RNA sequence: GGGAACGACUCGAGUAGAGUCGAAAAGACAGGACCCGCGAGGCAAUGCUGAAGUCUGAGACUGAAGGUCUCCUCUUCUCAUCCUGCACAACACUUAACGCGAUGACCCUCGGUGCGCGAGCUGGUGGGUUAAACUCAUGUUCGCAUGAGUUUAACCAAAAGAAACAACAACAACAAC
Reactivity to 2A3 in 0.01 (KOAc 150mM, MgCl2 10mM, bicine 150mM(pH8.5), 24C), signal-to-noise 9, nucleotides 027 to 126: g110a020c070a040g030g040a040c010c010c010g020c040g030a020g010g030c050a050a040u080g020c060u060g070a050a010g040u070c100u130g040a030g000a050c050u130g120a150a030g160g010u010c010u000c000c000u010c000u030u010c010u010c000a090u110c010c010u030g020c030a040c030a100a090c040a030c030u110u140a100a020c040g020c010g090a070u110g080a080c010c000c000u020c040g030g010u060g010c050g010c010g010a020g030c030u050g020g080u070g070
Reactivity to DMS in 0.01 (KOAc 150mM, MgCl2 10mM, bicine 150mM(pH8.5), 24C), signal-to-noise 4, nucleotides 027 to 126: g000a060c050a070g030g020a130c040c020c030g010c130g020a070g000g000c060a040a070u010g010c080u010g000a060a030g010u020c070u000g000a100g010a050c030u010g010a140a130g010g000u010c030u020c020c100u030c030u010u000c030u010c040a100u000c030c020u020g000c060a090c110a060a060c120a030c090u040u040a090a120c070g000c030g020a090u030g000a090c040c000c040u010c020g020g000u010g000c000g020c060g010a100g010c030u020g000g000u010g010